Structure probing data (2A3) for a 207-nucleotide construct. The 2A3 profile rests on 675 reads. Conditions: 150 mM KOAc, 10 mM MgCl2 and 150 mM bicine (pH 8.5), 24 C. Source: RMDB library M2RFPK, as collected in RNAgym. 2A3 adducts were read by reverse transcription with SuperScript II with manganese.
RNA sequence: GGGAACGACUCGAGUAGAGUCGAAAAACGGCUGGCUACGGCCAGCCGAAUCGGGCCAAAGGCAGUCGCCCGACGACACAGGCGAUCGUUCGCCCAAGCGCUGCACACCACUAUACGUAGUCGUGAAUUGAUCACGCAACCUUCGGGUUGCGUGAAACUUCGUUAUAGAGUUCGCUCUAUAACGAAGAAAAGAAACAACAACAACAAC
Reactivity to 2A3 in 0.01 (KOAc 150mM, MgCl2 10mM, bicine 150mM(pH8.5), 24C), signal-to-noise 1, nucleotides 027 to 156: a000c000g000g000c000u010g000g000c060u060a030c240g090g040c020c000a020g010c040c000g000a000a000u020c000g020g000g000c040c000a130a120a080g110g060c010a000g070u070c060g030c000c000c000g000a000c010g000a000c000a000c040a110g140g100c060g010a050u050c050g070u070u050c090g240c020c050c000a030a020g070c040g000c070u020g010c040a020c000a020c100c040a020c010u040a020u040a140c170g080u070a040g020u080c000g020u020g060a120a160u110u200g050a080u050c000a010c000g000c000a000a000c000c000u060u090c140g070g040g000u000u000g000c000g010u000g020a000a000a000